[RMDB]
This 177-nucleotide RNA was probed chemically with DMS and 2A3.
It was measured as part of the RMDB library 15KREP.
The 2A3 profile rests on 2,156 reads.
RNA sequence: GGGAACGACUCGAGUAGAGUCGAAAAGUUCAACAGUGGGGUUAUGUAGGCAAUCUUGCUACUAAUCACGAUCGUUAUUGCUCUGUCCAUCAAGGAGCUCAUGUGGCUUCUAAUGAUGCAAUAAUGACAACUUCAAUCAGUUCGCUGAUUGAAGUUGAAAAGAAACAACAACAACAAC
Reactivity to DMS in 0.01 (KOAc 150mM, MgCl2 10mM, bicine 150mM(pH8.5), 24C), signal-to-noise 2, nucleotides 027 to 126: g000u010u020c040a030a080c140a080g020u020g000g000g000g000u000u010a020u020g020u000a050g010g020c040a080a170u020c240u010u020g020c030u000a020c010u000a030a020u000c030a090c070g010a090u000c000g000u000u000a000u000u000g000c020u000c090u000g000u030c170c040a030u000c100a130a040g010g000a010g020c000u010c080a140u000g030u000g000g010c000u000u000c000u000a080a050u010g010a020u000g010c000a020a010u000a010a000u000g000a070
Reactivity to 2A3 in 0.01 (KOAc 150mM, MgCl2 10mM, bicine 150mM(pH8.5), 24C), signal-to-noise 2, nucleotides 027 to 126: g020u050u090c030a060a050c010a110g030u040g050g040g020g000u030u020a060u260g030u050a050g150g000c020a030a100u100c160u110u140g040c020u010a010c000u000a030a010u030c010a010c080g050a060u010c000g000u000u000a010u000u010g000c000u000c050u090g110u030c030c020a050u040c030a040a020g000g000a000g010c010u000c010a150u300g120u160g020g000c000u000u000c010u020a100a110u090g030a010u090g000c010a000a020u000a010a010u000g020a000